[RMDB]
RNA sequence: GGGAACGACUCGAGUAGAGUCGAAAAGGGGACGGGGGCCAGGCCAUGGCUGCUCAGAUACAUGGGCCCAUGAAAUUGAUGAACUGAGAGCUGCUUCCAGCCCUGCGCGCACCAUCUGGAAUUCCAGUGCUGCGUACAUUUUCGAAUGUACGCAGCAAAAAGAAACAACAACAACAAC
Reactivity to DMS in 0.01 (KOAc 150mM, MgCl2 10mM, bicine 150mM(pH8.5), 24C), signal-to-noise 2, nucleotides 027 to 126: g000g000g000g000a220c000g020g000g050g020g050c090c060a020g040g010c140c040a010u010g000g080c150u100g040c000u020c010a000g000a150u020a060c290a110u000g040g000g000c020c020c040a050u000g000a210a080a160u040u020g000a170u000g000a080a110c050u020g000a110g010a070g030c010u010g000c070u010u000c080c000a180g000c000c030c000u000g000c180g000c000g010c140a120c090c000a050u020c060u000g000g000a160a140u000u010c030c050a070g000
Reactivity to 2A3 in 0.01 (KOAc 150mM, MgCl2 10mM, bicine 150mM(pH8.5), 24C), signal-to-noise 2, nucleotides 027 to 126: g020g000g000g020a030c020g010g010g030g000g000c020c010a040g000g030c020c010a010u030g000g000c050u060g020c000u040c000a040g010a080u260a080c200a230u070g000g000g000c000c000c000a000u000g050a010a070a020u210u240g080a090u160g010a110a040c050u100g020a020g000a010g180c040u020g000c010u010u010c020c010a020g010c000c000c010u030g000c020g000c010g000c010a010c000c000a080u000c030u020g040g040a130a090u240u070c000c000a010g050